[RMDB]
RNA sequence: GGGAACGACUCGAGUAGAGUCGAAAACAGUGGACACCGGACCGCAACGCGGGUUUCUCCACCGCCAACCCGGGUCGGCUGUACCUGCCGCCCAGCCAGGACCCGGUUUACGGGUAUCAGGCCGUCACCCUCCCGUUAAAUUCGUUUAACGGGAGGGAAAAGAAACAACAACAACAAC
Reactivity to DMS in 0.01 (KOAc 150mM, MgCl2 10mM, bicine 150mM(pH8.5), 24C), signal-to-noise 3, nucleotides 027 to 126: c040a040g040u070g000g010a070c030a060c000c000g000g020a100c020c010g000c130a090a100c300g000c000g000g000g000u000u010u000c060u010c020c010a230c030c000g010c010c070a130a120c250c170c000g010g000g000u000c020g000g010c090u000g000u020a040c060c010u020g000c010c040g020c020c020c020a080g010c030c010a070g040g000a040c010c000c020g000g010u020u020u070a080c000g000g010g000u000a060u010c020a060g010g000c020c170g000u030c090a140
Reactivity to 2A3 in 0.01 (KOAc 150mM, MgCl2 10mM, bicine 150mM(pH8.5), 24C), signal-to-noise 5, nucleotides 027 to 126: c020a040g060u090g090g050a020c030a080c080c000g000g040a020c000c030g040c110a060a030c080g010c020g000g040g000u010u090u020c040u020c000c020a060c010c000g010c030c020a090a070c030c000c010g000g010g020u010c020g040g000c080u010g020u070a120c000c000u020g050c020c020g020c010c020c010a000g010c000c000a030g010g050a020c000c000c000g000g000u070u110u110a050c010g000g000g010u070a100u080c020a020g010g020c020c010g110u090c020a090